[RMDB]
An RNA of 177 nucleotides, treated with DMS and read out base by base.
The data come from the RNA Mapping Database (RMDB), library M2PK90.
RNA sequence: GGGAACGACUCGAGUAGAGUCGAAAAUUAGAGGUCUCGAUCACAGCGAGACCGGGAGAGACGCUCCCGGGCCGGGUUAGGAACCGGUGGGGCGGGUGGUAUAGGAGCCGGCCGGACCCGGGGAUAACUCUAGUUUAAUGUUCGCAUUAAACUAGAGAAAAGAAACAACAACAACAAC
Reactivity to DMS in 0.01 (KOAc 150mM, MgCl2 10mM, bicine 150mM(pH8.5), 24C), signal-to-noise 3, nucleotides 027 to 126: u010u000a130g020a140g040g000u000c010u010c000g010a080u000c150a110c300a150g000c010g000a020g010a030c000c000g000g000g020a070g010a170g000a090c130g010c150u000c000c010c000g020g000g010c020c000g020g010g010u020u010a100g000g000a080a150c030c010g000g030u000g010g010g000g000c180g000g010g000u000g000g000u000a140u000a090g010g020a300g010c020c000g010g010c010c030g010g010a110c010c000c000g010g010g020g000a040u000a030a130
DMS adducts were read by reverse transcription with MarathonRT.